Chemical mapping of a 177-nucleotide RNA with 2A3 and DMS. The RNA was probed in 150 mM KOAc, 10 mM MgCl2 and 150 mM bicine (pH 8.5) at 24 C. High 2A3 reactivity points to a flexible backbone, as in loops and unpaired stretches. The data come from the RNA Mapping Database (RMDB), libraries RFM100 and RFMREP.
[RMDB]
RNA sequence: GGGAACGACUCGAGUAGAGUCGAAAAACACGGUUACGACCGUGAAAGCACUUACAACUGUUUGCAGAGGAAACUGAGACUUUGUAACUACAUCUCAGUCUCAACUGCAAAGAAGUAAGUGCUUAAACCAAACGAAAAUCUUCGGAUUUUCGUUUGGAAAAGAAACAACAACAACAAC
Reactivity to 2A3 in 0.01 (KOAc 150mM, MgCl2 10mM, bicine 150mM(pH8.5), 24C), signal-to-noise 6, nucleotides 027 to 126: a000c010a000c000g020g010u070u110a070c230g020a020c050c000g000u000g010a050a000a000g000c000a000c000u010u000a000c010a120a030c090u100g150u260u030u010g010c000a000g020a030g000g070a010a010a000c000u010g000a000g020a010c030u160u190u120g100u170a180a160c040u120a050c120a030u020c000u000c000a000g010u000c000u000c000a010a030c010u010g000c000a000a000a020g020a060a010g000u000a000a000g000u000g000c000u000u000a010a000a000
Reactivity to DMS in 0.01 (KOAc 150mM, MgCl2 10mM, bicine 150mM(pH8.5), 24C), signal-to-noise 3, nucleotides 027 to 126: a150c010a040c000g020g010u000u010a130c160g030a100c010c020g000u000g020a040a050a010g000c000a010c000u000u010a000c000a040a300c110u020g000u050u010u000g010c000a010g030a060g050g000a010a010a020c000u000g000a000g000a060c260u000u050u030g010u030a110a090c220u060a150c100a260u000c010u000c000a000g000u000c020u000c020a020a040c010u000g000c000a000a000a000g010a050a170g000u000a010a000g030u030g000c010u000u000a010a050a110